[RMDB]
RNA sequence: GGGAACGACUCGAGUAGAGUCGAAAACAUACGUUAGCAGGUGUCACCAUGAAAAAAGCCAUAGCAUAUAUGCGAUUUUCAUCACCAGGUCAGAUGUCUGGCGACUCAUUAAACCGACAGAGAAGACUAGCUUAUAGCAUUUCGAUGCUAUAAGCUAAAAAGAAACAACAACAACAAC
Reactivity to DMS in 0.01 (KOAc 150mM, MgCl2 10mM, bicine 150mM(pH8.5), 24C), signal-to-noise 4, nucleotides 027 to 126: c060a100u000a090c120g000u000u000a070g010c060a050g020g020u000g000u000c070a050c040c070a060u000g000a000a010a050a070a250a200g010c120c060a030u000a050g020c180a100u010a070u000a020u000g000c040g010a180u010u000u000u000c040a020u000c110a090c070c020a050g000g000u010c060a080g010a100u010g010u010c020u010g030g000c040g000a070c100u000c070a070u000u010a050a070a080c060c030g010a070c090a030g000a090g000a070a090g010a070c150
Reactivity to 2A3 in 0.01 (KOAc 150mM, MgCl2 10mM, bicine 150mM(pH8.5), 24C), signal-to-noise 3, nucleotides 027 to 126: c020a040u210a050c080g110u080u080a030g030c030a040g050g010u030g000u060c020a050c090c000a040u100g000a050a060a020a030a000a020g090c070c010a030u040a040g030c080a050u090a030u020a030u300g020c030g040a080u050u020u020u070c060a040u050c010a010c040c030a020g000g060u050c030a020g030a120u090g040u050c030u010g040g040c020g050a040c000u030c100a050u100u160a050a070a090c020c010g050a030c030a020g090a010g040a200a010g020a040c040
The record gives the reactivity of an RNA of 177 nucleotides to DMS and 2A3. Conditions: 150 mM KOAc, 10 mM MgCl2 and 150 mM bicine (pH 8.5), 24 C. The data come from the RNA Mapping Database (RMDB), library OK2TRN.